RNA sequence: GGGAACGACUCGAGUAGAGUCGAAAAUUUAGAUGCUUCAUCGUUUGCUCCACCUCCUGAUAUUACAGCAACUGCUUUGGCAAACGGUGCUGUAAUACGAAAGGUAUUUCAGGAUCGAAGAAAACAAGAUCAGCUAGGAGUUCGCUCCUAGCUGAUCAAAAGAAACAACAACAACAAC
Reactivity to 2A3 in 0.01 (KOAc 150mM, MgCl2 10mM, bicine 150mM(pH8.5), 24C), signal-to-noise 3, nucleotides 027 to 126: u250u280u110a060g040a050u040g040c040u050u020c010a030u030c050g070u080u150u100g030c050u040c060c010a100c000c000u020c020c000u060g030a100u000a010u030u000a050c020a010g020c040a120a170c010u000g030c050u110u100u280g170g000c100a130a060a010c040g030g020u000g010c010u000g000u000a000a000u010a030c020g060a100a050a020g060g000u050a110u030u070u030c040a030g040g000a040u140c170g000a090a040g050a050a090a010a010c110a050a050
Reactivity to DMS in 0.01 (KOAc 150mM, MgCl2 10mM, bicine 150mM(pH8.5), 24C), signal-to-noise 1, nucleotides 027 to 126: u020u000u000a080g040a040u000g020c090u000u000c040a020u000c090g020u080u000u030g000c080u000c050c100a080c130c010u000c000c080u020g000a170u000a000u000u000a020c000a000g050c000a050a170c080u000g000c170u020u020u020g050g020c030a140a050a270c050g000g050u000g000c040u020g000u010a000a020u000a000c160g000a020a030a010g000g000u110a100u020u000u000c050a080g060g020a070u000c030g000a020a150g060a050a050a050a180c230a110a090
This 177-nucleotide RNA was probed chemically with 2A3 and DMS.
DMS adducts were read by reverse transcription with MarathonRT.
Source: RMDB library OK1LIB, as collected in RNAgym.
Conditions: 150 mM KOAc, 10 mM MgCl2 and 150 mM bicine (pH 8.5), 24 C.